[RMDB]
RNA sequence: GGGAACGACUCGAGUAGAGUCGAAAACGGUGAAAUUCCACUAGUCGUGAAGAUGCGACUUACCCGCGGAAGGACGGAAAGACCCCGUGAACCUUCACUGCAGCUUGGCAUUGGCCGCUGGUCCGGCGUCAUUCCUAAGGUUCGCCUUAGGAAUGACAAAAGAAACAACAACAACAAC
Reactivity to 2A3 in 0.01 (KOAc 150mM, MgCl2 10mM, bicine 150mM(pH8.5), 24C), signal-to-noise 1, nucleotides 027 to 126: c040g050g020u030g030a070a050a090u200u040c020c010a000c070u040a020g020u010c000g030u010g140a250a120g140a210u280g030c000g000a000c000u000u060a120c000c000c010g030c030g120g020a100a060g040g050a070c040g020g040a020a140a080g090a050c000c040c000c000g000u000g030a000a060c000c000u050u060c080a070c120u140g040c030a000g050c000u100u120g010g020c010a220u060u180g190g000c040c030g000c000u040g000g020u060c030c000g060g000c010
Reactivity to DMS in 0.01 (KOAc 150mM, MgCl2 10mM, bicine 150mM(pH8.5), 24C), signal-to-noise 2, nucleotides 027 to 126: c090g030g040u010g010a090a150a210u010u000c020c020a220c100u010a040g000u010c040g050u000g000a060a150g030a090u060g010c030g000a020c020u000u000a090c060c030c010g000c130g010g000a070a050g010g000a130c080g010g010a030a090a090g010a260c130c100c020c010g000u020g000a050a150c040c000u000u000c060a090c060u010g010c080a060g010c050u000u000g000g010c050a170u010u010g000g010c050c040g000c060u020g010g010u000c050c050g000g000c120